[RMDB]
RNA sequence: GGGAACGACUCGAGUAGAGUCGAAAAGCCGUCAGACCGGGAACUGUUCUCUACCCGGAGCCUGGCGUCAGUGAGAGAACUCGCUUCUGCGUUGAGUAUCAGGGCGCAGAGGGACUUCAACUGAUACUAGGCCCGCCGGAACAGGUGCCAGCGACACGUCAUAUAAUCCGUUCGCGGAUUAUAUGACAAAAGAAACAACAACAACAAC
Reactivity to 2A3 in 0.01 (KOAc 150mM, MgCl2 10mM, bicine 150mM(pH8.5), 24C), signal-to-noise 2, nucleotides 027 to 156: g090c000c010g020u040c040a060g000a200c020c070g000g000g030a030a040c030u110g020u010u020c040u010c030u050a050c000c000c020g000g010a030g020c010c000u010g000g010c010g040u030c030a010g050u040g080a070g000a010g000a070a030c010u010c140g140c010u020u000c000u010g000c000g020u020u040g070a020g040u120a070u150c060a060g000g090g000c000g000c000a000g000a000g000g010g020a000c010u080u010c070a110a050c000u000g000a000u000a030c000u000a020g010g000c000c000c010g000c010c030g010g040a030a040c010a030g000g040u080g040c010c010a000g040c000g040a010c010a000c130